[RMDB]
RNA sequence: GGGAACGACUCGAGUAGAGUCGAAAAAAGAAGUCAAUCAGAGAAUAAGCAUCUCCAUGUAGAGGGUUUUACCUGACUUGUUCCAGAGCAGCAGGAAGACGAGGAGUAGAGUACUUUGAGUGACAGAGUGCGAACAAUUGUUCGCAAUUGUUCGCACAAAAGAAACAACAACAACAAC
Reactivity to DMS in 0.01 (KOAc 150mM, MgCl2 10mM, bicine 150mM(pH8.5), 24C), signal-to-noise 2, nucleotides 027 to 126: a090a050g010a170a090g000u000c030a060a100u000c060a040g000a020g010a150a100u000a060a070g000c030a170u010c040u000c000c040a120u000g010u000a080g000a100g020g000g010u000u000u000u000a100c010c010u000g020a090c030u000u000g030u000u010c060c170a140g000a080g020c070a040g010c020a030g000g000a060a040g000a040c020g020a100g010g000a020g010u000a120g010a170g000u010a050c010u000u000u000g010a050g010u000g000a020c030a110g030a150
Reactivity to 2A3 in 0.01 (KOAc 150mM, MgCl2 10mM, bicine 150mM(pH8.5), 24C), signal-to-noise 2, nucleotides 027 to 126: a010a000g150a100a000g010u000c000a000a030u010c010a000g000a000g060a170a090u150a190a000g020c010a060u040c000u000c010c010a060u190g110u240a110g060a090g050g210g000u000u020u020u030a230c000c000u060g130a300c030u180u140g040u090u080c110c020a020g040a000g090c010a000g010c010a000g020g020a010a010g030a010c030g030a080g010g010a020g000u110a090g060a000g020u020a030c020u040u000u040g000a030g010u000g000a000c010a000g090a030